[RMDB]
RNA sequence: GGGAACGACUCGAGUAGAGUCGAAAAUCGCGCGUGCGCGUACCUGCGCUGGUACCGUGUGCGCACACGUACGUCACGAUCAGAGUGAUCAGCUACAGACUGGCCAGUGCGCCGUAUACUCGUACGCCUGAACUGUGCGAUUCGUCGCACAGUUCAGAAAAGAAACAACAACAACAAC
Reactivity to 2A3 in 0.01 (KOAc 150mM, MgCl2 10mM, bicine 150mM(pH8.5), 24C), signal-to-noise 3, nucleotides 027 to 126: u110c020g030c010g010c010g030u010g010c000g000c070g020u000a000c000c010u100g120c160g000c240u110g030g000u020a040c030c040g030u010g000u030g020c010g000c020a000c010a000c020g070u100a010c050g030u030c080a030c120g070a120u090c050a060g140a050g300u070g020a060u040c060a030g000c010u090a090c030a050g120a150c040u100g010g010c010c020a130g100u070g120c070g000c000c030g030u080a030u020a060c050u060c040g010u020a010c020g060c040
Reactivity to DMS in 0.01 (KOAc 150mM, MgCl2 10mM, bicine 150mM(pH8.5), 24C), signal-to-noise 3, nucleotides 027 to 126: u010c080g000c060g010c000g000u000g010c040g040c190g020u000a000c050c050u000g000c150g000c090u000g000g020u020a030c060c040g020u010g010u010g000c070g020c060a020c090a070c100g020u010a070c120g010u000c060a100c050g010a060u000c080a110g020a190g020u000g010a020u000c020a040g010c050u000a100c170a080g000a100c000u000g000g000c010c020a090g020u010g000c050g010c040c060g000u000a070u000a090c100u000c030g010u000a030c050g000c060